Source: RMDB library OK1LIB, as collected in RNAgym. Chemical mapping of a 177-nucleotide RNA with DMS and 2A3. The RNA was probed in 150 mM KOAc, 10 mM MgCl2 and 150 mM bicine (pH 8.5) at 24 C. For DMS, 969 sequencing reads were counted. DMS adducts were read by reverse transcription with MarathonRT.
RNA sequence: GGGAACGACUCGAGUAGAGUCGAAAAGAUGGCGAUAUGUGUAAGCCAACACAAAACUAUAUUUUUAAUGAGCAAAAUAAUAAUGGACUAUCAAGCUUAAUCAUUGGUCGAACGACUAUGUCAGAAGACUCUCCCCCUCAUUCGUGAGGGGGAGAGUAAAAGAAACAACAACAACAAC
Reactivity to DMS in 0.01 (KOAc 150mM, MgCl2 10mM, bicine 150mM(pH8.5), 24C), signal-to-noise 1, nucleotides 027 to 126: g010a070u180g000g000c000g000a130u070a040u080g060u040g000u050a000a120g000c240c040a080a000c080a000c050a130a000a110a160c060u130a160u090a090u100u020u000u000u000a000a300u090g020a080g000c050a230a080a050a070u000a000a120u000a130a050u000g000g000a020c000u000a010u000c080a000a070g000c000u000u020a040a010u050c050a050u040u000g000g000u000c000g000a060a090c150g000a020c010u000a000u080g000u000c120a020g000a070a040g000
Reactivity to 2A3 in 0.01 (KOAc 150mM, MgCl2 10mM, bicine 150mM(pH8.5), 24C), signal-to-noise 3, nucleotides 027 to 126: g080a010u040g000g000c060g000a020u050a070u280g180u080g110u120a090a000g080c000c000a030a000c120a000c010a030a030a140a010c100u040a120u030a160u160u040u060u000u190a180a100u240g020a010g090c020a000a170a010a000u140a170a050u100a140a070u070g120g000a040c030u050a020u200c070a050a100g000c060u100u060a080a020u050c010a070u000u150g040g000u000c010g040a110a080c090g000a010c000u020a040u140g000u030c060a040g110a040a020g010